[RMDB]
RNA sequence: GGGAACGACUCGAGUAGAGUCGAAAAGAGAAGUGUCCGGUUCGAUCCCUGCGUGGGUUAUCCACGGCGGAAGCGGCUUGAGUAAUCAGCCUUCGACCGCCAGCUAACAAGCAGGCUUAAACCCGGAGCUUUUAAUUCAGUUCGCUGAAUUAAAAGCAAAAGAAACAACAACAACAAC
Reactivity to DMS in 0.01 (KOAc 150mM, MgCl2 10mM, bicine 150mM(pH8.5), 24C), signal-to-noise 3, nucleotides 027 to 126: g020a160g020a080a090g030u000g030u010c010c000g000g000u000u000c140g000a090u000c220c010c000u000g000c010g000u010g010g010g000u000u020a030u000c030c120a140c160g000g020c020g000g000a050a150g020c300g000g010c000u000u000g010a010g000u010a200a100u000c000a030g010c000c000u010u020c020g010a300c000c010g000c000c000a030g000c110u000a060a030c080a110a100g000c000a010g010g010c060u010u010a020a090a090c160c010c010g000g000a190
Reactivity to 2A3 in 0.01 (KOAc 150mM, MgCl2 10mM, bicine 150mM(pH8.5), 24C), signal-to-noise 1, nucleotides 027 to 126: g120a000g030a140a010g100u060g090u020c010c010g010g000u040u090c030g010a080u050c000c000c000u010g000c030g080u130g040g200g010u060u030a060u090c040c040a040c080g000g000c000g020g000a010a010g010c010g020g030c080u220u250g000a000g020u110a110a170u010c000a000g000c000c000u070u100c010g030a020c000c000g000c000c000a000g010c010u020a030a000c010a060a050g020c000a000g030g000c000u060u100a060a020a020c000c020c010g000g020a010